Source: RMDB library OK2TRN, as collected in RNAgym. Structure probing data (2A3 and DMS) for a 177-nucleotide construct. For 2A3 the reverse transcriptase was SuperScript II with manganese. The reactions ran in a buffer of 150 mM KOAc, 10 mM MgCl2 and 150 mM bicine (pH 8.5), at 24 C. Reactivities are rounded to 0.1 and cut off at 0 and 3.
RNA sequence: GGGAACGACUCGAGUAGAGUCGAAAAUGAUUUUAUUGAGAUUUUUGAGGGACUGGAUCUAGCACAAAACCUUGUCCCACAGUGCUUGAGUUAGUUCAAAGAUCAUGACUAUUGUGCUAAUCCAUAGCACUAGGUCAUCUUUCGAGAUGACCUAGUGAAAAGAAACAACAACAACAAC
Reactivity to 2A3 in 0.01 (KOAc 150mM, MgCl2 10mM, bicine 150mM(pH8.5), 24C), signal-to-noise 4, nucleotides 027 to 126: u030g010a050u090u140u150u300a150u110u120g010a070g020a070u040u090u030u150u230g070a050g000g000g010a000c010u040g000g000a010u000c070u100a030g030c060a000c000a020a140a050a040c030c030u070u160g000u000c000c060c000a000c000a020g150u110g010c000u030u020g030a010g000u060u090a030g030u080u000c040a040a100a030g080a100u100c050a080u140g100a070c090u120a140u180u120g010u010g010c010u000a020a030u030c040c020a050u080a040g050
Reactivity to DMS in 0.01 (KOAc 150mM, MgCl2 10mM, bicine 150mM(pH8.5), 24C), signal-to-noise 4, nucleotides 027 to 126: u020g000a150u010u010u010u010a100u020u000g010a260g010a060u000u000u010u000u010g010a100g000g000g010a040c050u000g020g000a060u000c210u010a030g000c030a010c030a030a070a110a130c080c100u010u000g000u000c000c000c010a100c090a060g010u010g010c010u000u000g010a030g000u000u000a020g020u000u010c050a100a040a070g000a040u000c120a080u000g010a130c130u010a150u000u000g000u000g000c000u010a050a060u000c030c040a110u000a080g020